Chemical mapping of a 207-nucleotide RNA with 2A3.
For 2A3, 736 sequencing reads were counted.
Conditions: 150 mM KOAc, 10 mM MgCl2 and 150 mM bicine (pH 8.5), 24 C.
RNA sequence: GGGAACGACUCGAGUAGAGUCGAAAACUGCCCUGGCCUUCCUGCCUUGGUGCCUGCGCUCCCCACCAUCCUGCAAAGAGGAACCCUGGGAGUGAGUGGAGGUGGCAGGGGUUUGGUUCCUGCCUGCUGCCAGGCGGCCUUGCCCAGGGGGUGGGUACUAGUAGCUAGGGUUCGCCCUAGCUACUAGAAAAGAAACAACAACAACAAC
Reactivity to 2A3 in 0.01 (KOAc 150mM, MgCl2 10mM, bicine 150mM(pH8.5), 24C), signal-to-noise 1, nucleotides 027 to 156: c070u030g020c010c000c040u000g030g010c170c040u060u100c020c020u140g050c000c040u030u050g100g040u030g040c000c010u010g000c050g050c040u050c020c020c000c000a010c000c000a090u040c010c010u000g050c110a280a030a050g080a050g070g030a010a050c000c000c000u000g000g030g000a040g040u150g070a040g040u130g000g090a060g030g030u040g020g010c000a000g000g000g000g000u030u140u170g040g030u070u030c000c010u010g040c010c000u050g120c020u000g010c000c000a030g040g030c030g020g060c000c000u030u040g000c030c030c000a000g020g000g000g010g000u010g000g000g000u020a050